[RMDB]
RNA sequence: GGGAACGACUCGAGUAGAGUCGAAAAACUAGUAUGUACAGGGGUGAGUUGACCUGUCAUCUAGACUCCUGACCAUCAACUCACCGGUCAGCUGGAUGAUGUCCACAGAGUACGACAUCAGUACUCAGUGUAUGGAUGCGUUCGCGUAUCUAUACACAAAAGAAACAACAACAACAAC
Reactivity to DMS in 0.01 (KOAc 150mM, MgCl2 10mM, bicine 150mM(pH8.5), 24C), signal-to-noise 9, nucleotides 027 to 126: a100c020u000a020g010u020a030u010g000u060a010c010a030g000g010g000g010u010g010a010g010u000u000g000a050c080c060u000g000u000c000a020u020c020u010a050g010a140c090u010c040c030u010g000a050c070c210a170u010c030a020a030c030u000c020a060c080c060g000g000u000c030a030g000c050u000g000g000a070u010g010a060u010g010u000c010c030a080c190a110g000a030g010u010a010c030g010a140c170a100u040c120a080g010u010a010c000u000c010a140
Reactivity to 2A3 in 0.01 (KOAc 150mM, MgCl2 10mM, bicine 150mM(pH8.5), 24C), signal-to-noise 9, nucleotides 027 to 126: a000c010u020a010g040u090a100u150g040u070a010c010a020g100g030g030g070u070g040a040g030u030u050g060a050c010c050u020g010u000c000a010u010c010u030a050g040a080c040u030c000c020u020g020a030c020c020a030u050c020a020a030c020u010c030a040c010c030g020g020u020c010a010g000c030u040g020g020a070u070g020a040u080g080u020c010c010a060c050a070g020a010g020u030a010c050g090a030c100a170u130c040a060g010u010a010c010u000c030a010
The data come from the RNA Mapping Database (RMDB), library OK1LIB. Chemical mapping of a 177-nucleotide RNA with DMS and 2A3. The RNA was probed in 150 mM KOAc, 10 mM MgCl2 and 150 mM bicine (pH 8.5) at 24 C. 2A3 adducts were read by reverse transcription with SuperScript II with manganese. The 2A3 profile rests on 84,976 reads. The DMS profile rests on 57,883 reads.